RNA sequence: GGGAACGACUCGAGUAGAGUCGAAAAGAUAUGGACGUCGUCAUGGUAGACUUGAGCUCGGAAACGAGCUCAACGGUCUAUAAUCAUGCGACGUCCUAAGUCAAAGAUACCAGUUCGCUGGUAUCAACUGUACGUAACACUUCGGUGUUACGUACAGAAAAGAAACAACAACAACAAC
Reactivity to DMS in 0.01 (KOAc 150mM, MgCl2 10mM, bicine 150mM(pH8.5), 24C), signal-to-noise 3, nucleotides 027 to 126: g000a060u000a300u010g000g000a020c000g030u010c010g010u030c020a000u010g000g020u010a020g000a030c010u010u010g010a010g000c010u000c010g000g000a080a120a220c000g000a010g000c000u000c000a030a030c300g010g000u000c000u000a070u000a300a110u010c000a000u000g000c040g020a030c010g000u000c000c000u010a010a040g000u000c020a140a130a130g000a030u000a000c010c000a010g040u000u010c250g020c010u000g010g000u010a000u000c010a060a110
Reactivity to 2A3 in 0.01 (KOAc 150mM, MgCl2 10mM, bicine 150mM(pH8.5), 24C), signal-to-noise 2, nucleotides 027 to 126: g010a010u050a010u170g020g000a000c000g000u000c010g060u190c030a000u010g050g050u230a070g010a020c010u030u050g000a010g000c000u010c000g000g000a030a050a030c010g020a000g010c020u000c000a000a000c020g010g000u000c010u040a230u180a180a170u190c010a000u000g000c000g010a010c000g000u000c000c000u010a010a010g000u010c010a000a070a010g000a000u010a000c010c000a020g040u070u060c300g030c170u010g000g000u000a000u010c000a000a010
Structure probing data (DMS and 2A3) for a 177-nucleotide construct. The DMS profile rests on 2,486 reads. The 2A3 profile rests on 5,485 reads. 2A3 adducts were read by reverse transcription with SuperScript II with manganese.